[RMDB]
RNA sequence: GGGAACGACUCGAGUAGAGUCGAAAAGAUAUGGAGAGUCAUGGACAUGCUAUGGGAUCGGAAACGAUCCUGCAUAGCAACAGCCAUACUCUCCUAAGUCAAAGAUAUGAACUUCGGUUCAUAUCAACUUGUUACAGAGGUUCGCCUCUGUAACAAGAAAAGAAACAACAACAACAAC
Reactivity to DMS in 0.01 (KOAc 150mM, MgCl2 10mM, bicine 150mM(pH8.5), 24C), signal-to-noise 4, nucleotides 027 to 126: g000a020u000a120u030g000g010a020g020a030g000u020c300a010u000g000g000a060c030a300u030g030c000u000a000u010g000g000g000a020u000c010g040g000a030a010a070c000g020a010u000c000c000u000g030c080a020u000a000g020c000a120a060c270a140g010c000c000a010u000a030c010u000c010u000c000c000u000a000a050g010u000c010a110a190a160g000a010u000a000u000g020a000a020c000u000u010c300g020g020u000u000c000a010u000a010u000c000a070a130
Reactivity to 2A3 in 0.01 (KOAc 150mM, MgCl2 10mM, bicine 150mM(pH8.5), 24C), signal-to-noise 3, nucleotides 027 to 126: g010a000u030a010u070g010g000a000g000a000g040u180c300a020u010g020g020a050c130a250u300g000c000u010a010u020g010g000g000a000u000c000g000g010a010a010a000c010g010a000u000c000c000u020g000c020a010u000a000g000c030a060a040c120a020g000c000c000a010u010a020c000u000c010u000c010c000u010a000a000g000u010c020a120a080a050g010a010u000a000u010g000a010a000c020u040u110c300g160g000u000u010c000a000u000a010u000c010a000a010